[RMDB]
Source: RMDB libraries RFM100 and RFMREP, as collected in RNAgym. Structure probing data (2A3 and DMS) for a 177-nucleotide construct.

RNA sequence: GGGAACGACUCGAGUAGAGUCGAAAAGCCGAUUUCAGUGUGUGUUCGUUCCUUGAGCGACGCUGAAAGGUAUUGCGCCAGACAACCAAAAGUUGUGCUGUUGCGCGUUGUAGGUAUUAGUUAAGCCUACUACCUCCUCUUUCGAGAGGAGGUAGUAAAAAGAAACAACAACAACAAC
Reactivity to 2A3 in 0.01 (KOAc 150mM, MgCl2 10mM, bicine 150mM(pH8.5), 24C), signal-to-noise 5, nucleotides 027 to 126: g060c000c010g080a090u000u010u010c000a000g000u020g000u020g060u030g060u090u000c010g050u150u170c090c000u100u160g020a010g000c000g010a020c020g000c000u000g020a010a000a000g020g000u090a130u100u300g010c000g000c000c000a010g000a000c010a000a000c010c040a050a040a030a030g000u010u020g020u110g170c010u020g050u170u190g000c000g000c010g000u010u070g000u010a040g000g010u020a080u140u070a180g170u060u130a160a020g020c020c020
Reactivity to DMS in 0.01 (KOAc 150mM, MgCl2 10mM, bicine 150mM(pH8.5), 24C), signal-to-noise 4, nucleotides 027 to 126: g000c000c000g000a140u010u010u000c010a020g000u000g000u000g010u070g040u000u000c010g030u030u050c170c210u050u030g010a020g020c030g000a030c000g000c000u000g000a000a020a020g000g020u030a060u040u040g010c010g020c000c000a020g000a010c000a000a000c000c040a090a090a150a300g000u000u000g000u010g010c010u000g000u040u030g010c020g030c000g000u000u000g010u000a060g000g000u000a100u020u020a170g000u000u020a080a110g000c070c030

For DMS the reverse transcriptase was MarathonRT. Conditions: 150 mM KOAc, 10 mM MgCl2 and 150 mM bicine (pH 8.5), 24 C.